[RMDB]
RNA sequence: GGGAACGACUCGAGUAGAGUCGAAAAGACUAGCCACGCACCCUCAUUGACACCCAUGUCGACCAUUUGUAUGUAAUCCACUCUCUUUGCCACACGUGGCGGUAGGCUCGGUUUGAGGAACUUGCCGCGUCAGUCGGAGUUUCGACUCCGACUGACGAAAAGAAACAACAACAACAAC
Reactivity to 2A3 in 0.01 (KOAc 150mM, MgCl2 10mM, bicine 150mM(pH8.5), 24C), signal-to-noise 3, nucleotides 027 to 126: g080a100c060u050a060g020c000c000a000c000g040c000a020c000c000c020u000c030a070u030u150g050a030c020a070c030c030c000a010u080g000u070c040g050a070c010c010a120u040u070u100g170u080a220u070g130u040a010a120u010c020c030a070c010u060c000u020c010u010u070u100g070c030c010a040c020a010c030g020u030g080g000c010g010g030u060a090g070g060c020u000c040g080g090u040u070u300g050a040g000g000a050a030c010u040u110g020c020c000g010
Reactivity to DMS in 0.01 (KOAc 150mM, MgCl2 10mM, bicine 150mM(pH8.5), 24C), signal-to-noise 1, nucleotides 027 to 126: g020a060c080u000a030g000c000c000a050c070g000c070a080c000c000c060u030c000a060u000u060g000a070c150a040c140c060c030a020u000g060u000c030g030a000c000c010a140u040u010u000g040u060a070u020g000u030a020a160u000c030c060a060c020u000c030u010c050u000u010u000g000c030c030a030c090a080c140g000u000g000g090c030g050g000u010a060g000g000c050u000c040g030g000u020u000u050g030a050g000g040a040a000c000u040u000g000c020c050g010
The record gives the reactivity of an RNA of 177 nucleotides to 2A3 and DMS.
Conditions: 150 mM KOAc, 10 mM MgCl2 and 150 mM bicine (pH 8.5), 24 C.
For DMS, 1,611 sequencing reads were counted.
For DMS the reverse transcriptase was MarathonRT.